Description: Conditions: 150 mM KOAc, 10 mM MgCl2 and 150 mM bicine (pH 8.5), 24 C. The record gives the reactivity of an RNA of 177 nucleotides to DMS and 2A3.
RNA sequence: GGGAACGACUCGAGUAGAGUCGAAAAACGGAUACCUACGAACAGGGUCUGGGCACAUCCGUAUCCGGCACUGUGGGUCGCAUUCGCACUUCGACGCGCCAAUUCGAGGUGAUGUUCGUGGCGGAGCCGCUGUGGUCCGAUUCGUCGGACCACAGCGAAAAGAAACAACAACAACAAC
Reactivity to DMS in 0.01 (KOAc 150mM, MgCl2 10mM, bicine 150mM(pH8.5), 24C), signal-to-noise 3, nucleotides 027 to 126: a010c070g020g020a080u000a080c020c010u000a060c180g000a080a140c070a040g000g020g000u000c030u010g030g020g010c110a060c150a100u000c090c050g010u000a070u010c030c000g020g020c050a040c040u010g010u000g000g000g010u000c110g020c070a180u000u000c050g030c060a100c080u020u000c010g010a030c210g010c090g030c110c060a070a210u010u000c130g000a100g010g000u000g020a090u000g010u000u000c060g010u000g010g000c040g000g020a070g010c120
Reactivity to 2A3 in 0.01 (KOAc 150mM, MgCl2 10mM, bicine 150mM(pH8.5), 24C), signal-to-noise 3, nucleotides 027 to 126: a000c020g010g030a000u150a190c010c020u070a040c080g120a140a030c030a100g000g100g070u040c030u120g030g030g000c060a050c010a060u050c050c030g000u030a050u030c050c000g000g010c040a030c090u040g010u050g040g060g000u000c010g040c050a150u020u090c020g000c040a040c080u130u060c020g040a020c020g030c000g020c030c040a060a140u190u080c070g100a090g050g000u060g030a300u080g040u120u060c050g000u030g000g020c030g010g050a020g050c020
2A3 adducts were read by reverse transcription with SuperScript II with manganese.